[RMDB]
This 177-nucleotide RNA was probed chemically with DMS.
RNA sequence: GGGAACGACUCGAGUAGAGUCGAAAAGAUAUGGAGCGAUCGAGCAAAUAUCAACUGGGAGGGAAGAGCAUCGGAAACGAUGUGGUCCCGAGGAUCAGUUGAUAUUUGCUCGAGUCGCUCCUAAGUCCUAAUAUAAAGCCUUCGGGCUUUAUAUUAGAAAAGAAACAACAACAACAAC
Reactivity to DMS in 0.01 (KOAc 150mM, MgCl2 10mM, bicine 150mM(pH8.5), 24C), signal-to-noise 2, nucleotides 027 to 126: g010a110u010a270u010g000g010a000g030c000g000a120u000c010g000a030g000c000a020a010a010u000a000u000c000a010a000c010u000g000g010g010a060g000g000g000a050a090g010a300g010c010a010u000c000g000g000a180a120a270c010g020a020u000g020u000g000g030u000c000c000c010g020a070g020g000a050u010c010a000g010u000u000g000a010u000a000u000u000u000g010c000u000c000g000a010g020u000c010g040c000u000c000c010u010a000a050g000u000c030

Source: RMDB library TTRINS, as collected in RNAgym. The reactions ran in a buffer of 150 mM KOAc, 10 mM MgCl2 and 150 mM bicine (pH 8.5), at 24 C. For DMS, 2,867 sequencing reads were counted. Values cover nucleotides 27 to 126.